[RMDB]
RNA sequence: GGGAACGACUCGAGUAGAGUCGAAAAGCAAAGAAAUUUUAUCCCAAUAAGGCGAAGUAAGCAAGUCGACCCAACGCGAGGGCGCUAGCGAGCUUACGAGCCCUAGCAGACUAAUACCGAGAAAAAAACUUAUUAUAUCCUUCGGGAUAUAAUAAGUAAAAGAAACAACAACAACAAC
Reactivity to DMS in 0.01 (KOAc 150mM, MgCl2 10mM, bicine 150mM(pH8.5), 24C), signal-to-noise 3, nucleotides 027 to 126: g020c120a070a020a060g020a100a100a110u020u000u000u000a150u010c000c000c000a160a130u010a100a060g000g010c020g000a130a140g010u000a010a030g010c030a120a120g020u000c030g010a140c030c010c040a060a060c160g020c130g010a110g010g000g000c060g010c220u000a110g010c020g020a280g020c010u000u000a020c060g000a300g010c010c000c020u000a060g000c080a070g020a090c090u000a040a100u000a040c070c050g000a130g040a020a010a070a070a060a060
Reactivity to 2A3 in 0.01 (KOAc 150mM, MgCl2 10mM, bicine 150mM(pH8.5), 24C), signal-to-noise 2, nucleotides 027 to 126: g010c020a020a110a070g110a080a240a030u090u150u070u110a050u030c000c000c000a000a070u120a020a020g020g010c000g030a050a000g010u010a000a020g020c000a000a060g020u060c040g230a300c000c010c010a140a110c100g040c040g220a140g000g010g010c020g010c020u030a030g090c000g020a010g000c000u010u000a020c010g000a010g000c000c000c000u010a030g000c000a010g060a080c040u070a020a070u090a170c040c090g050a030g230a200a060a010a000a000a030